Structure probing data (2A3 and DMS) for a 177-nucleotide construct. For DMS the reverse transcriptase was MarathonRT. It was measured as part of the RMDB library OK2TRN. The RNA was probed in 150 mM KOAc, 10 mM MgCl2 and 150 mM bicine (pH 8.5) at 24 C. 2A3 adducts were read by reverse transcription with SuperScript II with manganese.

RNA sequence: GGGAACGACUCGAGUAGAGUCGAAAACGUUGGUGCUGGAAGACAUCGAAAAGCACAAGGCGACAUCCAUGGUCGUCGUACCAGUGAUGCUGUCGCGGAUCCUCGACCAGCUGGAGAAAACCGAACCGUGCAGGAUAGAUUUCGAUCUAUCCUGCACAAAAGAAACAACAACAACAAC
Reactivity to 2A3 in 0.01 (KOAc 150mM, MgCl2 10mM, bicine 150mM(pH8.5), 24C), signal-to-noise 1, nucleotides 027 to 126: c030g050u030u150g130g000u060g000c000u000g000g060a060a000g020a090c020a120u120c060g040a060a020a050a030g020c040a040c030a090a080g040g000c010g020a020c000a020u050c060c010a030u140g060g010u020c060g050u020c060g000u110a060c010c010a030g040u000g060a060u090g010c040u050g050u050c000g000c040g030g050a020u050c000c000u010c020g000a000c010c010a000g000c010u070g070g000a030g040a020a150a010a020c000c000g080a050a030c060c050
Reactivity to DMS in 0.01 (KOAc 150mM, MgCl2 10mM, bicine 150mM(pH8.5), 24C), signal-to-noise 3, nucleotides 027 to 126: c130g000u000u000g000g060u010g010c000u010g000g010a140a160g000a090c120a120u020c070g000a080a110a090a090g000c060a050c130a110a170g000g020c000g000a050c030a030u000c070c090a110u010g030g030u000c040g030u010c180g010u010a050c060c050a110g010u000g000a060u000g000c060u000g000u000c000g010c110g010g030a220u000c060c050u000c060g010a140c010c020a060g000c040u000g040g010a100g000a070a060a080a120c020c000g000a090a100c160c140